[RMDB]
RNA sequence: GGGAACGACUCGAGUAGAGUCGAAAAGCCCGGAUGCCGCCGGCUCGUCACGGACUCGCGCGUAACCCUCCUCCGCUUCAUCGGUUACGCACAAGCUGUUCGACCCACCAGCCACGGCCUUCCGUGGGGCGCCUUUUCCUUUCGAGGAAAAGGCGCCAAAAGAAACAACAACAACAAC
Reactivity to 2A3 in 0.01 (KOAc 150mM, MgCl2 10mM, bicine 150mM(pH8.5), 24C), signal-to-noise 1, nucleotides 027 to 126: g080c000c010c010g000g000a020u010g000c010c040g030c000c150g010g000c000u000c000g050u000c030a000c080g010g010a030c000u000c050g010c030g000c000g010u000a000a020c030c000c010u070c030c000u100c030c110g120c120u150u170c090a150u090c020g000g020u010u000a000c000g050c000a000c030a090a010g000c010u030g020u040u030c060g030a160c030c000c000a010c020c050a080g000c000c000a060c010g010g010c000c030u060u010c030c000g030u080g070g020